This 177-nucleotide RNA was probed chemically with DMS and 2A3. The data come from the RNA Mapping Database (RMDB), libraries RFM100 and RFMREP. Reactivities are given for positions 27 through 126. 2A3 adducts were read by reverse transcription with SuperScript II with manganese. The reactions ran in a buffer of 150 mM KOAc, 10 mM MgCl2 and 150 mM bicine (pH 8.5), at 24 C.
RNA sequence: GGGAACGACUCGAGUAGAGUCGAAAAUCACUUUGCCAGUUGGACUUAUGUCUUUAUUGGUCAUUCAAGUGGGGCAAAGAAAAUAUCCUUUUAAAACUCAGGCAAACUGGUGUUUGUCUUGUAUCCUUGAGAUAAGUAAUUUCGAUUACUUAUCUCAAAAAGAAACAACAACAACAAC
Reactivity to DMS in 0.01 (KOAc 150mM, MgCl2 10mM, bicine 150mM(pH8.5), 24C), signal-to-noise 7, nucleotides 027 to 126: u020c150a150c010u000u000u000g010c000c000a110g010u010u010g010g010a050c020u000u010a070u010g020u000c020u000u010u020a110u030u010g010g010u010c080a040u010u010c160a030a030g040u000g010g000g010g010c030a020a030a030g010a050a080a110a070u010a080u000c010c000u000u010u020u020a030a070a110a100c170u010c110a020g000g000c010a010a010a030c010u000g010g020u020g010u000u000u000g010u000c030u000u010g010u000a060u010c090c110u000
Reactivity to 2A3 in 0.01 (KOAc 150mM, MgCl2 10mM, bicine 150mM(pH8.5), 24C), signal-to-noise 9, nucleotides 027 to 126: u060c000a010c020u020u010u020g010c000c010a130g030u080u100g090g050a020c000u080u070a040u130g040u020c000u030u210u050a210u100u170g030g010u030c030a040u140u140c080a040a020g040u050g030g100g000g010c010a010a020a030g070a030a070a010a000u130a050u040c010c000u060u110u060u150a080a150a020a020c080u080c080a010g000g000c010a010a010a010c040u180g170g060u200g110u090u010u000g000u000c000u010u050g020u020a080u080c020c020u010